[RMDB]
Source: RMDB library OK2TST, as collected in RNAgym. An RNA of 177 nucleotides, treated with DMS and read out base by base.
RNA sequence: GGGAACGACUCGAGUAGAGUCGAAAAACAUGCUCUGGAAAAAAGAAUAGUACAUGACUGUCUUUGAUUGUGGUAGAGAUAGCUCACACUACAGCUGGAGCUAUUUGGGGCCAACAGGGUCACUGGGAACCUGCGACAUGUUCGCAUGUCGCAGGUUAAAAGAAACAACAACAACAAC
Reactivity to DMS in 0.01 (KOAc 150mM, MgCl2 10mM, bicine 150mM(pH8.5), 24C), signal-to-noise 1, nucleotides 027 to 126: a120c040a060u000g000c030u000c000u010g000g000a010a080a030a050a010a020g000a080a040u010a030g010u010a100c290a070u000g000a130c010u000g000u000c030u010u000u000g030a130u000u010g000u000g010g020u010a120g010a090g000a040u010a050g000c020u010c010a160c070a060c040u000a060c270a070g030c270u010g000g000a030g020c000u000a050u000u000u000g010g030g010g010c010c000a050a150c000a010g000g040g000u010c040a030c060u010g000g000g020
The RNA was probed in 150 mM KOAc, 10 mM MgCl2 and 150 mM bicine (pH 8.5) at 24 C.